The record gives the reactivity of an RNA of 177 nucleotides to DMS and 2A3.
The reactions ran in a buffer of 150 mM KOAc, 10 mM MgCl2 and 150 mM bicine (pH 8.5), at 24 C.
2A3 adducts were read by reverse transcription with SuperScript II with manganese.
RNA sequence: GGGAACGACUCGAGUAGAGUCGAAAAGAUAUGGACUGAACUACUCGGGGAGUGAGCGUUGAAAUCAUGGACUUUCGGAAACGAAAGUCCAUGAUGGAGCUCAUGAAAGACGAGCAGUCCUAAGUCACUAAACAUGUAGGUUCGCCUACAUGUUUAGAAAAGAAACAACAACAACAAC
Reactivity to DMS in 0.01 (KOAc 150mM, MgCl2 10mM, bicine 150mM(pH8.5), 24C), signal-to-noise 5, nucleotides 027 to 126: g010a080u010a300u010g000g000a010c000u000g000a050a050c080u010a250c020u000c000g010g000g010g000a300g030u000g000a020g020c000g000u000u020g000a180a160a010u000c000a010u000g010g000a020c000u000u000u000c000g020g000a110a100a200c000g000a010a000a020g020u000c000c000a010u000g000a000u000g000g000a120g010c010u010c000a010u000g000a120a160a210g000a080c020g010a010g020c000a010g000u000c000c000u010a040a100g010u000c040a300
Reactivity to 2A3 in 0.01 (KOAc 150mM, MgCl2 10mM, bicine 150mM(pH8.5), 24C), signal-to-noise 3, nucleotides 027 to 126: g020a000u090a060u220g010g020a000c010u030g010a160a090c090u190a060c000u300c010g000g000g070g020a080g030u030g010a010g000c030g220u300u110g010a110a140a000u000c000a000u010g000g020a010c000u000u000u000c030g030g040a160a070a110c010g000a020a000a000g010u000c010c000a000u000g000a000u000g000g000a000g000c000u000c000a010u050g070a060a100a050g300a060c000g020a010g060c000a000g010u000c010c010u010a050a040g030u000c020a000